[RMDB]
RNA sequence: GGGAACGACUCGAGUAGAGUCGAAAAAAAGAUCUAGCAAUAUGUGGAGGGUCAUUCUAAGGAACAUUGAUGUUUUUGACUGGUGGUGUCCAGGUAGAUGUGGGUGUUCUACCUUAUCAAAUUGGAAUAAUCUCAUUGUAUUCGUACAAUGAGAUUAAAAAGAAACAACAACAACAAC
Reactivity to 2A3 in 0.01 (KOAc 150mM, MgCl2 10mM, bicine 150mM(pH8.5), 24C), signal-to-noise 4, nucleotides 027 to 126: a000a000a040g070a020u080c040u070a020g060c030a090a080u060a030u300g090u080g020g060a070g060g000g000u020c020a050u090u050c060u080a080a060g050g010a060a000c010a050u040u140g060a060u150g190u090u030u030u090u110g070a030c010u010g010g030u000g000g090u070g050u020c020c010a010g000g030u020a030g020a040u070g020u060g080g010g000u050g010u050u000c010u020a040c010c000u020u080a090u090c040a070a100a140u060u060g030g010a050a040
Reactivity to DMS in 0.01 (KOAc 150mM, MgCl2 10mM, bicine 150mM(pH8.5), 24C), signal-to-noise 9, nucleotides 027 to 126: a050a070a080g010a060u010c050u000a100g020c080a100a070u010a060u010g020u010g010g010a130g000g000g010u000c090a060u010u000c070u010a090a100g010g010a050a040c070a060u000u010g010a080u010g010u000u000u000u000u010g000a080c060u000g010g020u000g010g010u000g000u000c040c050a040g000g010u000a040g010a030u010g020u010g000g000g000u000g010u010u000c030u000a040c020c010u000u000a120u010c110a030a060a120u010u010g010g010a110a140
Source information
Structure probing data (2A3 and DMS) for a 177-nucleotide construct. For 2A3, 3,719 sequencing reads were counted. Values cover nucleotides 27 to 126. 2A3 adducts were read by reverse transcription with SuperScript II with manganese. High 2A3 reactivity points to a flexible backbone, as in loops and unpaired stretches. It was measured as part of the RMDB library OK2TRN. For DMS, 21,161 sequencing reads were counted.